Structure probing data (DMS and 2A3) for a 207-nucleotide construct. Conditions: 150 mM KOAc, 10 mM MgCl2 and 150 mM bicine (pH 8.5), 24 C. For 2A3, 1,325 sequencing reads were counted.
[RMDB]
RNA sequence: GGGAACGACUCGAGUAGAGUCGAAAAAAAUUCUUUUGAUUUGUUUUGAAUGAUUUCAAAUAGGUCUUCGUCUACAGUAGGCAUACCAUUAGAUAAUCUAGCCAUUAUAAAGUGCACGUUUACAUAUCUACGUUCUGGAGGAGUAAGAACGUGACUACGCAUCUAAUUUUUUCGAAAAUUAGAUGCGAAAAGAAACAACAACAACAAC
Reactivity to DMS in 0.01 (KOAc 150mM, MgCl2 10mM, bicine 150mM(pH8.5), 24C), signal-to-noise 1, nucleotides 027 to 156: a050a040a090u010u000c010u000u000u000u000g010a120u000u020u010g020u000u010u020u000g020a060a050u020g010a190u020u000u020c040a010a080a090u000a130g030g010u000c020u010u000c060g050u010c010u000a060c040a120g030u020a050g030g010c020a170u000a050c050c010a090u000u000a050g010a060u000a060a040u000c020u000a160g040c040c050a070u000u000a060u000a030a090a130g030u000g030c020a080c100g020u010u010u000a020c060a170u000a060u000c040u000a020c000g000u000u030c130u010g000g030a180g010g040a190g020u010a100a050g020a020a030c040g020u010g000a100c000u000a120
Reactivity to 2A3 in 0.01 (KOAc 150mM, MgCl2 10mM, bicine 150mM(pH8.5), 24C), signal-to-noise 2, nucleotides 027 to 156: a000a010a020u080u110c030u020u030u010u020g050a100u090u090u010g050u030u090u070u090g080a080a100u110g030a080u030u040u080c050a030a070a110u090a040g000g010u010c000u050u100c080g070u000c040u050a090c090a140g120u100a020g000g000c010a020u030a030c000c010a050u000u080a080g050a090u080a090a010u010c030u030a060g020c030c010a070u110u130a140u090a120a120a030g020u090g060c040a020c020g000u010u030u060a030c040a050u120a060u000c010u010a010c030g090u080u000c030u080g120g040a070g030g020a020g040u050a050a000g010a040a000c000g000u000g000a000c010u020a020

The data come from the RNA Mapping Database (RMDB), library OK3TST.